[RMDB]
RNA sequence: GGGAACGACUCGAGUAGAGUCGAAAAACUGCAUCUAAGGAUGCAGAACUACGUUCAUCCAAUUUAUUUGGACGCAUGAAAUGAGAAUAGGGAACGGGAUUCUCAUACGCAGGCUACGGCCUGCGAAAAAACUCCUUAUGCUUCGGCAUAAGGAGAAGUGUACCUUUAAGUUCGCUUAAAGGUACACAAAAGAAACAACAACAACAAC
Reactivity to DMS in 0.01 (KOAc 150mM, MgCl2 10mM, bicine 150mM(pH8.5), 24C), signal-to-noise 2, nucleotides 027 to 156: a170c000u000g010c000a010u010c000u000a170a160g090g000a020u000g010c030a020g020a070a100c030u010a030c010g020u010u010c010a100u000c170c190a160a140u000u000u010a180u030u000u000g010g000a000c000g000c010a060u000g000a090a130a140u000g010a100g000a030a040u000a170g000g000g010a110a070c020g000g030g000a300u000u000c000u010c020a080u000a190c000g000c000a020g000g010c010u000a070c290g050g020c000c010u020g020c020g010a000a020a020a060a060a000c000u010c000c000u010u000a000u000g010c000u000u000c300g020g000c000a010u000a000a000g000g000a000g030a010a010
Reactivity to 2A3 in 0.01 (KOAc 150mM, MgCl2 10mM, bicine 150mM(pH8.5), 24C), signal-to-noise 4, nucleotides 027 to 156: a000c000u000g000c000a000u010c010u070a110a130g180g000a010u000g010c000a000g010a010a000c060u110a020c010g010u010u010c010a000u000c010c000a030a000u080u200u160a180u100u150u080g000g010a000c010g000c030a030u120g100a130a170a030u010g000a020g000a010a000u010a040g040g000g010a010a010c010g000g010g010a000u010u000c000u000c000a000u020a020c000g000c010a000g020g000c010u030a090c240g130g000c000c000u000g000c000g010a010a000a000a000a000a000c000u000c000c000u010u000a000u010g000c000u010u050c130g120g020c000a000u000a000a000g000g010a000g000a000a000

The data come from the RNA Mapping Database (RMDB), library M2RFOK. This 207-nucleotide RNA was probed chemically with DMS and 2A3. For DMS, 2,826 sequencing reads were counted. The 2A3 profile rests on 3,832 reads. 2A3 adducts were read by reverse transcription with SuperScript II with manganese. The reactions ran in a buffer of 150 mM KOAc, 10 mM MgCl2 and 150 mM bicine (pH 8.5), at 24 C.